[RMDB]
RNA sequence: GGGAACGACUCGAGUAGAGUCGAAAAGGGGGUCACAAAAUCACUUGGUGCAUGCCGAGGGGGCCGCUUUCCUCGUAAAUCCAGCAGCAAACUUAUAGUUGCCAACGAAGACAACUUCGCUGUAGCCGCUUAAGGCUUAAGCCUCGAAACUGCUUGUCCUACACAUUAAGUUCGCUUAAUGUGUAGGAAAAGAAACAACAACAACAAC
Reactivity to 2A3 in 0.01 (KOAc 150mM, MgCl2 10mM, bicine 150mM(pH8.5), 24C), signal-to-noise 2, nucleotides 027 to 156: g040g020g000g010g010u040c050a040c030a120a160a030a090u110c010a050c030u000u020g000g010u080g030c100a110u180g030c040c010g000a010g000g020g000g010g000c000c010g110c070u000u040u020c000c000u030c010g070u030a010a020a020u020c030c010a010g010c010a000g000c000a020a060a030c050u130u130a070u050a240g020u010u010g000c010c020a040a040c030g000a010a010g020a060c040a180a210c040u010u020c040g010c020u030g050u090a030g000c000c000g080c050u120u140a060a030g020g000c030u030u070a090a020g000c000c000u050c050g040a070a050a070c040u080g000c000u050u050g030u000